[RMDB]
RNA sequence: GGGAACGACUCGAGUAGAGUCGAAAACCAGUUCUGGUUGAGAUAUUUUGCCGCGACGGAAAAAACGUCCUGGCUGGCUUGCCUGAGCGCGCCGCAGCGCUUAAAAAUGCUCGCGGAACUGAUGCAGCAUUUAAAACGUCUUCGGACGUUUUAAAUGAAAAGAAACAACAACAACAAC
Reactivity to DMS in 0.01 (KOAc 150mM, MgCl2 10mM, bicine 150mM(pH8.5), 24C), signal-to-noise 2, nucleotides 027 to 126: c050c000a040g000u000u000c010u000g010g040u010u010g010a010g020a060u000a020u000u000u000u000g010c020c000g030c300g000a020c010g020g010a000a070a090a090a110a120c000g020u000c010c010u010g020g000c000u000g000g000c030u000u010g010c000c000u030g000a020g020c010g000c030g010c150c240g000c150a060g010c000g010c010u000u020a010a010a020a040a030u000g000c010u000c040g030c000g000g000a030a020c010u000g010a060u000g040c140a110g000
Reactivity to 2A3 in 0.01 (KOAc 150mM, MgCl2 10mM, bicine 150mM(pH8.5), 24C), signal-to-noise 1, nucleotides 027 to 126: c010c010a000g000u020u020c010u120g260g010u220u290g040a030g000a090u090a040u130u050u070u070g010c000c040g000c010g010a010c000g050g000a300a010a000a000a000a000c000g010u010c000c000u010g000g000c000u000g000g030c010u020u130g030c030c020u010g000a010g000c000g000c010g090c100c220g100c090a060g000c050g020c000u060u010a050a020a000a000a020u040g010c010u030c070g000c010g050g010a000a010c020u030g020a060u150g060c090a090g040
An RNA of 177 nucleotides, treated with DMS and 2A3 and read out base by base.
The 2A3 profile rests on 932 reads.
The reactions ran in a buffer of 150 mM KOAc, 10 mM MgCl2 and 150 mM bicine (pH 8.5), at 24 C.